[RMDB]
RNA sequence: GGGAACGACUCGAGUAGAGUCGAAAACGAGGCGGGGCGGAGCGCUAUCGGCCCGAUGGAUGGCCGCCUGCUUCCAGGCAUGCCGUCGCCCCCUUGGAGCCCAGGCCGAGCGCCUCGAACUGUGAGACAUCCUCCCAGCUUUCGAGCUGGGAGGAUGAAAAGAAACAACAACAACAAC
Reactivity to DMS in 0.01 (KOAc 150mM, MgCl2 10mM, bicine 150mM(pH8.5), 24C), signal-to-noise 1, nucleotides 027 to 126: c050g000a150g010g020c050g030g000g010g040c030g020g010a160g010c120g000c070u020a120u010c050g020g010c020c020c030g020a150u010g030g030a020u010g010g060c040c300g000c000c000u000g000c160u000u010c090c060a070g010g010c030a050u040g020c010c040g050u000c000g000c060c030c010c100c070u030u020g010g000a130g000c120c180c040a200g000g040c010c000g000a030g010c000g030c010c010u010c020g030a040a110c020u000g010u010g020a190g000a230